The record gives the reactivity of an RNA of 207 nucleotides to 2A3 and DMS.
Values cover nucleotides 27 to 156.
The DMS profile rests on 7,959 reads.
DMS adducts were read by reverse transcription with MarathonRT.
The reactions ran in a buffer of 150 mM KOAc, 10 mM MgCl2 and 150 mM bicine (pH 8.5), at 24 C.
RNA sequence: GGGAACGACUCGAGUAGAGUCGAAAAAUGGUAGUUAGUCUACUCGCUGUCCUAGUUACUUUGGAGUAAUCUAAAGUGUGUGUAAACGGGCGAAAGUCUGUAAAAUACUGGGGACAUAGGGUCAACAAGAACUAGUAGACCUUCGGGUCUACUAGAAACAGGUAACAAUGUUCGCAUUGUUACCUGUAAAAGAAACAACAACAACAAC
Reactivity to 2A3 in 0.01 (KOAc 150mM, MgCl2 10mM, bicine 150mM(pH8.5), 24C), signal-to-noise 3, nucleotides 027 to 156: a000u110g040g010u050a070g030u140u070a060g040u040c010u030a040c010u020c030g040c050u020g000u000c000c000u040a040g030u090u050a020c010u000u000u020g020g000a030g020u130a130a160u020c010u010a000a000a010g010u030g010u020g000u000g020u080a110a110a020c020g020g010g010c030g020a040a010a010g000u000c010u010g030u040a040a060a040a020u080a040c020u030g010g000g010g020a000c010a010u090a080g060g000g020u090c030a020a040c040a110a080g070a100a040c010u000a000g000u000a000g000a000c000c000u010u020c120g030g000g000u010c000u010a000c000u000a000g000a000a000
Reactivity to DMS in 0.01 (KOAc 150mM, MgCl2 10mM, bicine 150mM(pH8.5), 24C), signal-to-noise 3, nucleotides 027 to 156: a120u000g000g010u000a040g020u000u000a070g010u000c020u000a040c020u000c040g020c110u000g000u010c010c020u000a110g010u000u000a010c000u010u000u000g040g000a040g000u000a160a150u000c000u000a020a000a020g010u000g030u010g020u000g030u000a080a190a060c010g070g000g010c000g010a180a100a240g020u010c000u000g000u000a050a070a050a050u000a020c020u000g020g010g020g010a040c010a050u000a040g000g000g030u010c090a060a110c080a080a100g030a070a180c000u000a020g010u000a000g000a040c000c000u010u010c290g050g020g000u000c010u010a000c000u000a000g000a020a070